[RMDB]
RNA sequence: GGGAACGACUCGAGUAGAGUCGAAAAGAUAUGGAAUCCAACUUCGAAGUGAUGCAUGGGAGCUCUACAAUCGGAAACGAUUGAGAGCAUCGAUCAUGUCAUCACUUCGAAGUUGGAUUCCUAAGUCCGCAUAUAUCAUGUUCGCAUGAUAUAUGCGAAAAGAAACAACAACAACAAC
Reactivity to DMS in 0.01 (KOAc 150mM, MgCl2 10mM, bicine 150mM(pH8.5), 24C), signal-to-noise 2, nucleotides 027 to 126: g000a100u020a300u000g010g010a030a000u000c000c000a020a030c000u000u000c010g010a020a010g020u000g010a010u000g000c010a010u000g000g000g010a050g020c000u000c010u000a130c000a000a020u000c000g010g010a180a090a210c000g000a030u000u000g010a070g000a020g010c000a100u000c180g020a040u000c010a000u000g000u010c010a010u000c010a000c000u010u000c000g020a000a010g040u000u000g000g000a000u000u000c000c000u000a010a110g000u000c060